[RMDB]
RNA sequence: GGGAACGACUCGAGUAGAGUCGAAAAGACAAGGGAAGUUGCCUAAUCAUGCUCCCAAGAAAAACUUCUAAGCUUCAGGUAUAAGGUACCUGUACCGUAAACCGACACAGGUAGUCGAGGAGAGUAUGCUUUAUGCCGAAUUCGUUCGGCAUAAAGCAAAAGAAACAACAACAACAAC
Reactivity to 2A3 in 0.01 (KOAc 150mM, MgCl2 10mM, bicine 150mM(pH8.5), 24C), signal-to-noise 1, nucleotides 027 to 126: g070a020c010a040a020g020g000g040a000a030g030u040u050g060c010c000u080a130a090u070c000a020u120g060c040u020c020c000c030a000a000g220a000a000a060a000a000c060u000u100c030u040a000a190g000c000u040u020c010a020g000g010u100a150u020a160a100g140g000u000a000c040c020u000g010u000a030c000c000g110u150a000a250a000c140c000g020a000c030a000c030a110g140g000u100a100g000u010c010g050a090g010g080a020g030a000g010u000a030u040
Reactivity to DMS in 0.01 (KOAc 150mM, MgCl2 10mM, bicine 150mM(pH8.5), 24C), signal-to-noise 1, nucleotides 027 to 126: g000a090c180a170a180g040g000g000a030a060g000u000u000g000c130c070u000a140a140u010c080a080u030g000c030u000c000c000c000a000a190g020a050a190a090a050a030c070u010u000c040u000a060a100g060c200u000u000c120a000g050g000u040a070u040a140a180g000g000u000a000c070c000u000g000u000a120c060c000g000u020a050a010a040c050c010g000a010c100a030c020a030g000g040u010a040g080u000c010g000a020g000g000a040g000a090g000u000a080u000